[RMDB]
RNA sequence: GGGAACGACUCGAGUAGAGUCGAAAAUUCGGGUUAGCAAGACGUUGCCAAGAGAACACAAAAUCGUGUGCAGUAACAGGUUCGCCAUUUGACCAUUUUGCUUCUGGACGAAGUUUAAAUGUCCACAGCGCAAGUAGGAAUUCGUUCCUACUUGCGCAAAAGAAACAACAACAACAAC
Reactivity to 2A3 in 0.01 (KOAc 150mM, MgCl2 10mM, bicine 150mM(pH8.5), 24C), signal-to-noise 1, nucleotides 027 to 126: u100u050c020g000g000g090u060u170a010g050c050a170a040g070a090c100g050u080u080g000c000c030a060a020g180a020g050a130a040c030a010c000a030a160a030a120u160c130g030u010g020u020g160c060a050g000u030a060a020c000a040g030g070u050u050c050g000c030c000a040u100u030u080g040a010c010c020a050u030u090u100u040g030c020u070u000c070u110g060g000a040c050g010a010a000g000u180u080u110a060a040a020u070g020u020c010c010a040c040a080
Reactivity to DMS in 0.01 (KOAc 150mM, MgCl2 10mM, bicine 150mM(pH8.5), 24C), signal-to-noise 1, nucleotides 027 to 126: u000u000c110g020g000g000u000u000a090g040c060a030a040g000a050c100g040u000u000g000c020c020a070a050g010a090g010a040a080c060a040c030a040a080a060a080u010c080g010u010g040u000g000c020a080g010u000a100a080c080a040g000g010u000u000c040g010c010c040a120u000u000u000g000a040c070c020a050u000u010u000u010g000c030u000u000c060u010g010g010a120c040g000a000a000g000u000u000u000a030a050a040u000g010u000c010c060a110c300a130

The record gives the reactivity of an RNA of 177 nucleotides to 2A3 and DMS. For 2A3 the reverse transcriptase was SuperScript II with manganese. The reactions ran in a buffer of 150 mM KOAc, 10 mM MgCl2 and 150 mM bicine (pH 8.5), at 24 C.